[RMDB]
RNA sequence: GGGAACGACUCGAGUAGAGUCGAAAAGAUAUGGAUCUACAGACAUGCUGGAUCGGAAACGAUGCAGCAACAGCUGUAAGAUCCUAAGUCAAACAUUCCAACACUCGUUCGCGAGUGUUGGAAUGAACAACAGAACUAGCUUCGGCUAGUUCUGUUGAAAAGAAACAACAACAACAAC
Reactivity to DMS in 0.01 (KOAc 150mM, MgCl2 10mM, bicine 150mM(pH8.5), 24C), signal-to-noise 2, nucleotides 027 to 126: g000a030u000a220u000g000g000a000u010c000u010a000c000a010g000a050c120a120u000g000c000u000g000g000a000u000c010g010g000a080a070a130c010g020a020u000g010c000a000g000c000a000a050c300a120g020c010u010g010u010a050a070g000a000u000c000c000u010a010a060g000u000c020a130a130a240c010a010u000u010c000c000a000a010c000a010c000u000c000g010u000u010c250g030c000g000a030g010u000g000u000u000g010g020a000a000u000g000a070a150
Reactivity to 2A3 in 0.01 (KOAc 150mM, MgCl2 10mM, bicine 150mM(pH8.5), 24C), signal-to-noise 1, nucleotides 027 to 126: g030a000u040a020u120g000g000a020u000c000u030a010c010a070g200a180c050a140u050g000c000u020g020g160a010u000c030g000g010a020a020a010c020g010a010u160g150c020a000g000c000a020a040c090a020g020c000u040g000u070a110a210g000a000u000c000c000u040a060a010g040u020c070a120a030a030c000a020u010u000c000c000a010a010c000a000c010u000c000g050u050u030c150g060c020g140a000g000u000g010u010u000g000g010a000a000u000g010a010a010